[RMDB]
RNA sequence: GGGAACGACUCGAGUAGAGUCGAAAACAUUGCAUAUCGAAGUGCAUCAUGAGGUCUGAGAUUGAUGCACGUUGACAUGCGUGGUAUCACUUUCUUAUGCGGGAGUGAGAAUUUGAAACCACAUCACGUUAAUACUUUAUUUCGAUAAAGUAUUAACAAAAGAAACAACAACAACAAC
Reactivity to DMS in 0.01 (KOAc 150mM, MgCl2 10mM, bicine 150mM(pH8.5), 24C), signal-to-noise 7, nucleotides 027 to 126: c070a100u060u040g000c000a000u000a110u010c000g000a030a040g010u000g000c000a000u000c000a010u010g000a220g020g010u040c150u050g010a200g000a120u000u000g000a000u000g000c000a000c000g010u010u010g000a020c060a000u000g010c000g010u000g000g010u000a090u000c000a000c000u000u010u000c000u000u010a050u020g010c160g000g010g010a070g000u000g010a010g010a030a020u010u000u000g000a040a090a020c020c000a010c030a160u060c190a080c150
Reactivity to 2A3 in 0.01 (KOAc 150mM, MgCl2 10mM, bicine 150mM(pH8.5), 24C), signal-to-noise 9, nucleotides 027 to 126: c030a060u050u150g000c000a000u010a010u010c000g030a070a010g000u000g000c000a000u000c000a000u010g040a020g080g210u080c080u120g120a070g010a090u010u000g000a000u000g000c000a000c010g000u000u020g000a000c000a010u010g000c020g000u000g000g000u010a010u040c000a000c000u000u020u000c000u020u110a060u130g060c070g040g020g000a060g010u000g010a000g010a010a020u030u010u040g010a030a010a000c010c000a000c000a050u070c040a020c070